Description: Structure probing data (DMS and 2A3) for a 207-nucleotide construct. 2A3 adducts were read by reverse transcription with SuperScript II with manganese. The RNA was probed in 150 mM KOAc, 10 mM MgCl2 and 150 mM bicine (pH 8.5) at 24 C. For DMS the reverse transcriptase was MarathonRT. It was measured as part of the RMDB library RNAMAK. Values cover nucleotides 27 to 156.

[RMDB]
RNA sequence: GGGAACGACUCGAGUAGAGUCGAAAAGCAGCGUGUUCGCACGCUGCAAAAAACCGUAGGUCGUGAUGUAGACAUGCGAGUGAUCCUUCGAAAGAGGGAUCAUUCGCAACAGCUACAUCCGACCUAAACGGAAAAAACGAUGUGUUCGCACAUCGAAUACAAUUCGUCUAUUCGUAGACGAAUUGUAAAAAGAAACAACAACAACAAC
Reactivity to DMS in 0.01 (KOAc 150mM, MgCl2 10mM, bicine 150mM(pH8.5), 24C), signal-to-noise 2, nucleotides 027 to 156: g050c000a010g000c010g050u000g030u000u000c300g040c020a030c010g000c010u000g030c000a000a010a040a090a050a050c000c010g000u000a050g020g000u000c010g030u010g060a020u010g000u010a050g000a070c060a300u000g010c000g000a030g050u020g000a010u000c000c010u000u000c010g000a180a130a280g010a020g000g000g010a000u000c000a000u000u000c000g020c000a010a030c090a200g010c000u000a010c010a000u000c010c010g000a000c000c010u000a000a010a050c020g010g020a000a020a040a040a060a080c020g000a040u010g020u010g020u000u010c300g060c010a030c020a010u000c000g010a080a170
Reactivity to 2A3 in 0.01 (KOAc 150mM, MgCl2 10mM, bicine 150mM(pH8.5), 24C), signal-to-noise 3, nucleotides 027 to 156: g040c010a000g000c010g000u020g080u080u240c240g010c110a000c010g000c000u000g030c010a010a000a000a000a010a000c030c000g000u020a030g000g000u030c040g190u300g110a000u000g010u000a000g040a110c060a110u010g000c000g000a000g010u000g000a010u020c010c020u020u000c000g090a140a080a070g030a000g000g000g000a010u000c000a000u000u010c000g000c000a000a010c020a000g020c000u000a000c000a000u000c000c000g010a000c010c000u000a000a010a000c000g000g080a120a050a000a000a000a020c010g000a000u000g020u000g040u090u090c260g040c080a000c000a000u010c010g000a030a000